[RMDB]
RNA sequence: GGGAACGACUCGAGUAGAGUCGAAAAACUUGUAGAGCGAGGACUCAUUUCCCCCACCCAAGCCAAACAGGUGCAGGGGAAUGGAGCAGUUUGACACCAGCCGCAGCUCUGUCCUAGGAGAAGAUCACACCUGGCUCAUGUUCGCAUGAGCCAGGUGAAAAGAAACAACAACAACAAC
Reactivity to 2A3 in 0.01 (KOAc 150mM, MgCl2 10mM, bicine 150mM(pH8.5), 24C), signal-to-noise 1, nucleotides 027 to 126: a000c230u220u180g140u040a010g000a020g050c050g000a020g080g030a040c000u010c000a000u060u000u140c000c000c000c000c000a000c000c070c000a180a070g150c120c030a080a190a290c050a040g000g010u030g100c080a020g000g000g000g000a020a020u040g000g010a180g010c090a030g010u110u130u110g040a000c010a070c040c000a000g000c000c000g070c080a000g000c000u000c050u150g000u030c000c000u030a040g000g140a180g130a210a050g000a120u100c000a000
Reactivity to DMS in 0.01 (KOAc 150mM, MgCl2 10mM, bicine 150mM(pH8.5), 24C), signal-to-noise 2, nucleotides 027 to 126: a020c130u020u000g060u050a070g000a050g060c060g080a210g010g000a180c110u050c010a130u010u000u000c000c000c080c300c040a000c000c000c010a090a110g000c100c250a050a080a160c300a290g060g020u000g000c300a100g160g000g000g110a090a000u000g000g030a020g020c190a060g000u030u030u010g000a180c140a000c060c030a170g000c000c010g000c080a080g000c050u000c000u090g000u000c000c010u010a000g000g050a080g010a140a130g000a180u000c050a220